Chemical mapping of a 177-nucleotide RNA with DMS and 2A3. 2A3 adducts were read by reverse transcription with SuperScript II with manganese.

RNA sequence: GGGAACGACUCGAGUAGAGUCGAAAAGAAAAGACGAUGUUAUUAUGAUUCUCGAGUAAUAGCAGGUCAGGCGUACUACUCGCCGAACGGAAGGCAGACUGUUCGCGCAAUGAAACGAGAAAGAAAACGUAUCGACCUAGUUCGCUAGGUCGAUACGAAAAGAAACAACAACAACAAC
Reactivity to DMS in 0.01 (KOAc 150mM, MgCl2 10mM, bicine 150mM(pH8.5), 24C), signal-to-noise 2, nucleotides 027 to 126: g000a040a090a040a160g030a030c030g020a100u010g000u010u000a030u000u000a070u000g010a030u020u020c030u000c000g000a300g010u000a090a020u000a000g000c000a050g000g020u000c000a040g030g030c030g020u060a060c080u010a120c110u000c060g070c250c000g010a000a010c030g000g040a050a090g020g020c130a060g030a170c040u000g000u000u000c000g020c110g000c060a150a090u110g000a020a040a090c000g000a050g010a010a080a050g000a090a000a180a070
Reactivity to 2A3 in 0.01 (KOAc 150mM, MgCl2 10mM, bicine 150mM(pH8.5), 24C), signal-to-noise 3, nucleotides 027 to 126: g030a000a130a010a000g070a010c040g090a170u010g000u010u010a050u020u030a010u060g140a200u050u020c010u010c010g010a000g000u020a000a000u020a010g000c000a000g040g050u040c020a040g080g000c000g030u050a060c030u020a010c010u020c070g000c000c000g000a080a030c060g020g040a060a080g110g010c020a030g040a220c020u030g000u010u080c010g000c010g010c140a060a190u190g080a110a010a020c020g000a010g040a010a030a000g100a010a100a000a000